Chemical mapping of a 207-nucleotide RNA with 2A3.
RNA sequence: GGGAACGACUCGAGUAGAGUCGAAAAUCAAAUGGCCUCACAUCCCAAUGCCGACAUUUAGCAUCAGUCCAGCUGGUUGGAAAGUCAAGGACUUACUUAAAGGUAAAAUACCACGAUUGGGAGUAUCGUUCAAUGCCGAAGGUGGUAUUAUGGACGGAGGAGAAAUGCGAUUCGUCGCAUUUCUCCUAAAAGAAACAACAACAACAAC
Reactivity to 2A3 in 0.01 (KOAc 150mM, MgCl2 10mM, bicine 150mM(pH8.5), 24C), signal-to-noise 1, nucleotides 027 to 156: u110c010a010a010a050u040g030g020c000c050u090c000a010c030a230u100c080c000c000a000a030u140g070c080c010g070a120c160a200u090u070u140a010g020c070a040u120c020a000g000u090c050c020a050g060c020u010g040g150u210u000g220g020a210a180a000g070u060c070a070a050g020g020a020c000u070u020a040c000u070u000a160a000a000g020g000u010a070a090a050a050u200a060c000c010a000c090g160a110u080u080g010g060g000a050g000u060a000u070c010g000u000u000c030a080a050u010g000c000c000g080a200a000g300g000u120g010g000u040a010u040u000a030u050g010g000a000c010g090g000

The 2A3 profile rests on 351 reads.
The reactions ran in a buffer of 150 mM KOAc, 10 mM MgCl2 and 150 mM bicine (pH 8.5), at 24 C.
For 2A3 the reverse transcriptase was SuperScript II with manganese.